RNA sequence: GGGAACGACUCGAGUAGAGUCGAAAAUGUUGCAGUUUGCUCUCUGAGCCCAAUCAUUUGGCAGCGGCAACAGAUUGAAUGAAAGAUGCACAACCUAAAGGUGUGUGAUAGCCUGGACCCGAGAGGCAGGCGUGGAAUUAUUCGUAAUUCCACGCCUAAAAGAAACAACAACAACAAC
Reactivity to 2A3 in 0.01 (KOAc 150mM, MgCl2 10mM, bicine 150mM(pH8.5), 24C), signal-to-noise 1, nucleotides 027 to 126: u050g020u000u020g000c010a010g000u120u250u160g060c060u060c010u010c010u080g040a070g050c120c020c000a040a110u060c010a020u010u020u070g030g000c000a000g010c010g050g000c010a030a000c000a030g060a150u100u180g060a020a070u070g050a130a090a060g100a030u210g000c010a010c010a050a250c000c030u170a220a140a020g000g000u080g000u030g010u050g060a070u130a000g040c010c000u030g040g020a080c000c000c080g060a040g030a000g070g120c030
Reactivity to DMS in 0.01 (KOAc 150mM, MgCl2 10mM, bicine 150mM(pH8.5), 24C), signal-to-noise 2, nucleotides 027 to 126: u040g010u010u000g000c010a040g020u000u010u010g030c010u000c040u000c030u000g000a100g000c090c040c100a060a180u020c010a060u000u000u010g000g020c020a010g010c010g000g000c010a000a030c030a000g000a200u010u010g000a100a090u000g010a090a080a090g000a110u000g010c010a030c000a080a050c000c030u020a050a130a110g000g020u000g020u000g000u010g020a070u000a080g010c000c010u010g000g010a130c030c000c000g010a150g000a070g000g020c050